[RMDB]
RNA sequence: GGGAACGACUCGAGUAGAGUCGAAAAGGGAAUCCACUGGAACCUCUGAUGUCCAGUCCCUCCCCGGUUCUACUGAAGGGGGACUCCGGGACGCCUUGCAAGCUGGGGACGAAGCCGCCCCCGGGCGGACUAACCUCUUCUUCGGAAGAGGUUAGUCAAAAGAAACAACAACAACAAC
Reactivity to DMS in 0.01 (KOAc 150mM, MgCl2 10mM, bicine 150mM(pH8.5), 24C), signal-to-noise 2, nucleotides 027 to 126: g000g000g000a190a100u010c120c220a090c070u000g000g000a050a070c100c080u000c150u010g030a140u000g000u010c010c020a050g000u000c010c010c000u000c030c030c040c030g010g020u000u000c080u010a040c100u000g000a090a090g000g000g000g010g010a090c030u000c100c090g000g010g010a090c050g020c040c000u000u000g010c060a050a130g000c020u000g000g000g020g010a030c040g000a140a140g010c100c010g020c030c040c010c000c090g010g010g020c090g010
Reactivity to 2A3 in 0.01 (KOAc 150mM, MgCl2 10mM, bicine 150mM(pH8.5), 24C), signal-to-noise 2, nucleotides 027 to 126: g020g000g030a040a050u060c100c020a070c020u030g010g070a150a100c110c040u160c180u210g170a250u200g080u050c030c000a000g030u020c010c000c000u060c020c010c010c010g000g060u060u070c020u130a150c050u150g120a090a060g020g020g000g000g020a000c030u040c070c000g000g000g040a050c060g050c010c000u030u140g070c060a070a080g020c020u050g020g020g030g000a010c050g060a110a040g060c070c000g010c000c000c040c020c040g000g010g060c010g060